[RMDB]
Notes
This 177-nucleotide RNA was probed chemically with DMS and 2A3. It was measured as part of the RMDB library M2PK50. As a SHAPE reagent, 2A3 marks flexible, mostly unpaired nucleotides at the ribose 2'-OH. For DMS, 5,122 sequencing reads were counted. Values are in units of 0.01, from 0 to 300, in steps of 10.
RNA sequence: GGGAACGACUCGAGUAGAGUCGAAAAGGGAGCGAGUUCGCUCGCUCCCAAACCCGAUGAAGCGGCACUUACGGAGCUUCAUACAUCUAUGAAGUGCAAUAAAAAGCGGUAGCUUCGGCUACCGCAAGUAGUAUUCACAUUUCGAUGUGAAUACUACAAAAGAAACAACAACAACAAC
Reactivity to DMS in 0.01 (KOAc 150mM, MgCl2 10mM, bicine 150mM(pH8.5), 24C), signal-to-noise 5, nucleotides 027 to 126: g010g010g020a000g030c010g010a030g040u000u000c260g010c020u010c000g030c000u000c000c010c000a000a030a060c010c000c000g010a030u030g000a030a030g030c030g020g010c010a030c020u010u000a300c100g010g000a220g000c000u000u010c000a040u000a170c160a070u000c150u000a080u010g000a020a090g010u000g010c030a140a080u010a050a050a060a170a110g000c000g000g000u000a000g000c000u000u010c160g030g000c010u000a010c000c000g010c000a000a000
Reactivity to 2A3 in 0.01 (KOAc 150mM, MgCl2 10mM, bicine 150mM(pH8.5), 24C), signal-to-noise 5, nucleotides 027 to 126: g010g000g000a000g010c010g000a000g010u030u040c050g020c050u010c000g000c000u000c000c000c000a000a000a010c000c000c000g010a050u080g020a040a010g030c040g060g010c060a010c040u060u130a060c160g110g050a030g010c010u010u000c000a000u040a020c040a060u110c120u230a140u180g080a050a020g020u010g040c030a050a050u160a180a140a050a020a010g000c000g000g000u000a000g000c010u030u050c240g040g000c000u000a020c010c000g000c000a000a000